RNA sequence: GGGAACGACUCGAGUAGAGUCGAAAAAUUAUUUCAUCAAGAGCAACUUUGUCAAUUUCGAUUACAUCAUCAUUGUGCUGUGGCGCACCAUAUCCAAGAACGAAGAACUCAAUUUCACCAAGACGGACAUCAAGCUAUACUUUGAACUGUUAUGCGAGACUCACAAGGAAUUCGUUCCUUGUGAGUCAAAAGAAACAACAACAACAAC
Reactivity to DMS in 0.01 (KOAc 150mM, MgCl2 10mM, bicine 150mM(pH8.5), 24C), signal-to-noise 1, nucleotides 027 to 156: a180u000u000a040u000u010u000c030a040u000c120a100a090g020a060g030c030a080a140c040u010u060u000g050u000c030a110a190u000u010u010c040g040a060u000u000a170c070a110u010c050a090u000c070a170u000u000g010u030g010c020u000g000u030g000g000c020g030c070a130c010c000a040u070a090u000c010c010a080a180g010a060a040c030g000a040a070g020a040a110c120u000c080a010a080u010u000u000c040a080c000c010a060a080g000a090c070g030g020a090c070a080u000c040a020a020g040c020u000a080u000a020c010u000u010u000g010a100a120c000u000g010u010u000a160u000g010c000g000a300
Reactivity to 2A3 in 0.01 (KOAc 150mM, MgCl2 10mM, bicine 150mM(pH8.5), 24C), signal-to-noise 3, nucleotides 027 to 156: a000u120u110a040u040u090u050c050a120u030c020a060a030g020a040g020c020a020a060c030u050u100u070g060u070c070a060a090u020u120u180c070g050a030u090u110a070c020a060u090c010a030u020c030a060u060u090g000u020g040c030u050g030u030g060g010c020g000c040a000c000c010a020u040a010u070c040c020a000a040g020a070a060c070g030a030a060g000a070a050c000u010c130a030a120u000u060u090c050a050c030c020a000a030g050a040c050g030g010a010c000a020u050c030a070a000g010c000u080a030u050a150c050u050u070u110g010a040a000c030u020g030u090u080a040u110g040c010g030a060

Structure probing data (DMS and 2A3) for a 207-nucleotide construct. For DMS, 1,506 sequencing reads were counted. The 2A3 profile rests on 1,492 reads. For 2A3 the reverse transcriptase was SuperScript II with manganese.